Annotation:
An RNA of 177 nucleotides, treated with 2A3 and DMS and read out base by base. Values cover nucleotides 27 to 126. Conditions: 150 mM KOAc, 10 mM MgCl2 and 150 mM bicine (pH 8.5), 24 C. Source: RMDB library OK2TST, as collected in RNAgym. The 2A3 profile rests on 1,374 reads. Reactivities are rounded to 0.1 and cut off at 0 and 3. For 2A3 the reverse transcriptase was SuperScript II with manganese.
RNA sequence: GGGAACGACUCGAGUAGAGUCGAAAAAUAGGUCCACUGUCAUCUGCGUGGUCCCCAUUCGAUAACAAGGUGGUGGUUCAUGGGCAUGAAGUGUAUAAUUACGACUUUCCUGAGUACGGCACCGGCAACGAGAGGUGGAUUUCGAUCCACCUCUCGUAAAAGAAACAACAACAACAAC
Reactivity to 2A3 in 0.01 (KOAc 150mM, MgCl2 10mM, bicine 150mM(pH8.5), 24C), signal-to-noise 2, nucleotides 027 to 126: a000u060a020g090g060u040c080c000a000c020u160g300u100c010a040u030c030u150g110c010g060u020g010g000u060c040c030c000c000a050u250u260c030g080a090u070a200a030c050a020a070g020g000u040g020g140u100g000g000u010u030c020a050u070g000g010g070c010a010u030g040a010a020g030u000g090u040a040u030a110a140u120u020a020c030g070a020c020u000u000u000c010c010u020g000a020g020u070a090c000g010g030c040a020c000c000g060g010c020a040
Reactivity to DMS in 0.01 (KOAc 150mM, MgCl2 10mM, bicine 150mM(pH8.5), 24C), signal-to-noise 1, nucleotides 027 to 126: a050u000a100g030g020u000c050c010a010c080u000g030u000c080a050u010c050u000g050c050g040u000g020g000u040c020c020c000c010a100u000u000c050g020a190u000a070a100c300a070a190g010g020u000g020g000u000g010g000u000u000c040a000u000g000g020g000c290a050u000g000a030a030g040u000g000u000a020u000a110a100u010u000a040c090g000a060c040u000u000u000c020c010u010g000a090g010u010a050c000g020g010c140a170c020c050g020g030c140a130